[RMDB]
This 177-nucleotide RNA was probed chemically with 2A3 and DMS. The DMS profile rests on 3,530 reads. For 2A3, 2,973 sequencing reads were counted. Conditions: 150 mM KOAc, 10 mM MgCl2 and 150 mM bicine (pH 8.5), 24 C. It was measured as part of the RMDB library TTRDEL.
RNA sequence: GGGAACGACUCGAGUAGAGUCGAAAAGAUAUGGAUCCGUAUGGAGUCCGGGGUGAUCGGAAACGAUCACAAGGACGAUGAAAUACGGAGUCCUAAGUCAAAAGUGGAGCGGUUCGCCGCUCCACAACAAUCCAAAAAUCUUCGGAUUUUUGGAUUGAAAAGAAACAACAACAACAAC
Reactivity to 2A3 in 0.01 (KOAc 150mM, MgCl2 10mM, bicine 150mM(pH8.5), 24C), signal-to-noise 1, nucleotides 027 to 126: g000a000u020a010u020g000g010a000u010c000c010g000u020a020u030g010g010a010g000u000c010c050g030g060g150g100u080g010a010u000c000g000g030a010a000a000c000g010a010u000c000a010c000a000a110g020g000a000c020g060a300u000g000a010a010a000u010a000c000g000g000a000g000u010c000c000u000a010a010g020u000c020a250a000a000a000g000u010g000g000a010g020c020g020g030u070u100c220g010c070c000g040c010u000c000c000a000c000a010a000
Reactivity to DMS in 0.01 (KOAc 150mM, MgCl2 10mM, bicine 150mM(pH8.5), 24C), signal-to-noise 2, nucleotides 027 to 126: g000a020u000a080u020g000g000a170u000c000c000g020u000a010u000g020g000a010g010u000c000c010g010g010g030g030u000g010a000u000c000g010g000a010a030a050c000g010a000u000c000a010c000a080a130g000g010a010c000g010a090u000g000a130a110a010u000a000c010g000g000a020g010u000c000c000u000a010a090g000u000c000a090a080a110a110g000u000g010g000a010g040c000g020g000u000u000c220g020c010c000g020c000u000c010c000a000c000a010a110